[RMDB]
RNA sequence: GGGAACGACUCGAGUAGAGUCGAAAAAGGCCUAUUCAGCGUGCUAGCAAUUGCUUAGAUCCGGAACUACUGUAGUGACACCUGAGUGACGAGGGGUAAGCAAUAUCAUGUCAUUCACAACCCGGCCUCCACACCUCUUGUUCGCAAGAGGUGUGGAAAAAGAAACAACAACAACAAC
Reactivity to 2A3 in 0.01 (KOAc 150mM, MgCl2 10mM, bicine 150mM(pH8.5), 24C), signal-to-noise 2, nucleotides 027 to 126: a000g020g000c000c010u040a100u020u120c040a020g040c020g050u040g000c010u040a050g030c040a170a270u060u090g020c000u060u080a050g010a190u070c000c000g070g050a020a030c010u130a010c010u070g040u220a100g040u080g100a020c000a030c060c010u030g060a010g050u010g030a020c030g010a100g000g040g040g000u020a010a010g020c010a000a080u010a030u140c060a030u050g020u030c000a050u080u050c020a040c010a100a080c010c000c000g010g040c010c030
Reactivity to DMS in 0.01 (KOAc 150mM, MgCl2 10mM, bicine 150mM(pH8.5), 24C), signal-to-noise 2, nucleotides 027 to 126: a100g010g030c010c000u010a140u010u020c080a050g030c050g000u000g000c110u010a120g030c050a060a090u000u010g000c050u020u010a000g010a130u010c030c020g000g000a140a080c030u000a050c040u030g020u000a030g020u000g000a100c070a120c090c080u000g000a040g000u000g030a050c050g000a130g000g000g000g000u000a020a070g000c080a050a020u010a050u010c140a120u020g020u000c050a040u010u010c040a030c090a120a130c030c000c020g000g020c070c040
Structure probing data (2A3 and DMS) for a 177-nucleotide construct. DMS adducts were read by reverse transcription with MarathonRT.